Chemical mapping of a 177-nucleotide RNA with 2A3 and DMS. The reactions ran in a buffer of 150 mM KOAc, 10 mM MgCl2 and 150 mM bicine (pH 8.5), at 24 C. The 2A3 profile rests on 10,971 reads.

RNA sequence: GGGAACGACUCGAGUAGAGUCGAAAAGAUAUGGAGGUAGAGGAGCGCGAAACUAUGACGUCGGAAACGACGUUAUAGGAGCUCCCUACCUCCUAAGUCAAAUCACGACCCGUUCGCGGGUCGUGAACUUCCUACAUAACUUCGGUUAUGUAGGAAGAAAAGAAACAACAACAACAAC
Reactivity to 2A3 in 0.01 (KOAc 150mM, MgCl2 10mM, bicine 150mM(pH8.5), 24C), signal-to-noise 3, nucleotides 027 to 126: g000a000u010a000u040g000g000a010g020g000u030a010g120a300g070g000a000g000c040g040c180g300a200a040a000c000u000a000u000g020a000c010g000u000c010g000g020a010a010a000c010g020a000c010g000u000u000a000u000a000g010g020a010g000c000u000c000c000c000u000a000c000c000u000c000c000u000a000a000g000u000c000a010a000a040u040c000a010c020g010a000c010c030c000g020u060u080c300g030c010g130g040g000u000c000g000u000g000a010a010
Reactivity to DMS in 0.01 (KOAc 150mM, MgCl2 10mM, bicine 150mM(pH8.5), 24C), signal-to-noise 2, nucleotides 027 to 126: g000a000u000a010u000g000g000a020g020g000u010a000g020a220g070g020a010g030c000g060c240g010a200a030a030c010u010a000u000g000a000c000g020u000c000g020g010a000a000a020c000g010a010c000g000u000u000a010u000a000g000g000a020g000c000u000c000c000c000u000a010c000c000u000c000c000u000a000a050g000u010c000a110a160a160u000c020a010c010g020a010c000c000c000g010u000u000c270g010c020g000g000g030u000c000g030u010g010a030a110